[RMDB]
RNA sequence: GGGAACGACUCGAGUAGAGUCGAAAACAUUUCGAGAGGCCGGAAUUGAAGUUUGCCGUCCCAGUGAAAAUAAUCAAUCCAUAAUUCAUCAAAAAAUUGUAGACGAACUCGAAAACGGGAUUGUUAAACUCUCUGUAAUCUUCGGAUUACAGAGAGUAAAAGAAACAACAACAACAAC
Reactivity to DMS in 0.01 (KOAc 150mM, MgCl2 10mM, bicine 150mM(pH8.5), 24C), signal-to-noise 1, nucleotides 027 to 126: c060a050u040u000u000c010g020a150g000a160g050g040c110c040g040g000a050a080u000u000g020a090a120g000u000u000u000g020c020c070g050u000c010c000c010a300g040u040g000a090a040a120a040u000a110a100u000c020a020a040u000c000c040a050u000a050a180u000u000c010a110u020c050a000a070a030a070a050a020u000u010g050u000a140g000a070c020g000a110a210c090u000c010g000a040a030a080a150c210g010g010g000a020u020u020g000u000u000a110a160
Reactivity to 2A3 in 0.01 (KOAc 150mM, MgCl2 10mM, bicine 150mM(pH8.5), 24C), signal-to-noise 1, nucleotides 027 to 126: c030a020u000u050u130c100g000a090g010a120g130g000c020c030g010g020a050a040u040u050g040a140a050g070u090u050u050g130c000c000g050u000c030c010c000a010g010u150g100a040a050a030a110u240a000a010u100c010a000a000u000c000c000a000u040a080a080u130u080c010a100u060c150a130a100a170a220a210a100u120u120g080u100a000g060a070c010g010a020a010c070u030c070g050a080a090a000a030c090g040g000g040a000u010u000g000u090u050a190a070